[RMDB]
RNA sequence: GGGAACGACUCGAGUAGAGUCGAAAAGAGGAUGAGUUUACUAGAGGAUCUAAAAGACUUGCAGAAGCAAAAGAAGCUGCAUUUGAGAGACAGCCUCUGUUUAUCCAGCAAGUACUAGUCAACAUAAGUACGAUUAGGCUUUCGAGCCUAAUCGUACAAAAGAAACAACAACAACAAC
Reactivity to 2A3 in 0.01 (KOAc 150mM, MgCl2 10mM, bicine 150mM(pH8.5), 24C), signal-to-noise 1, nucleotides 027 to 126: g170a070g120g040a110u160g000a110g020u060u000u050a000c000u010a000g020a000g040g020a090u040c020u220a060a110a090a010g030a080c020u010u000g000c020a000g020a070a010g050c060a180a020a000a170g060a080a000g040c040u050g010c100a210u000u240u300g210a100g000a000g000a010c000a010g020c000c010u050c000u020g020u000u040u000a080u000c020c010a000g040c000a000a070g030u000a110c010u060a010g070u020c000a010a040c000a060u180a110a000
Reactivity to DMS in 0.01 (KOAc 150mM, MgCl2 10mM, bicine 150mM(pH8.5), 24C), signal-to-noise 2, nucleotides 027 to 126: g000a040g040g010a100u000g000a130g010u000u000u010a080c020u000a040g020a100g030g030a130u000c100u000a100a060a120a100g010a070c020u000u010g000c030a150g000a070a070g010c130a060a080a110a060g000a060a040g000c010u000g000c080a140u000u040u010g000a130g010a160g010a150c020a010g000c000c030u000c010u000g000u010u000u000a070u020c090c070a120g020c020a020a010g010u000a150c090u000a010g010u000c050a020a050c050a080u020a130a140
An RNA of 177 nucleotides, treated with 2A3 and DMS and read out base by base. For DMS, 974 sequencing reads were counted. Source: RMDB library OK2TST, as collected in RNAgym. DMS (dimethyl sulfate) methylates the pairing face of unpaired adenines and cytosines. The reactions ran in a buffer of 150 mM KOAc, 10 mM MgCl2 and 150 mM bicine (pH 8.5), at 24 C. DMS adducts were read by reverse transcription with MarathonRT.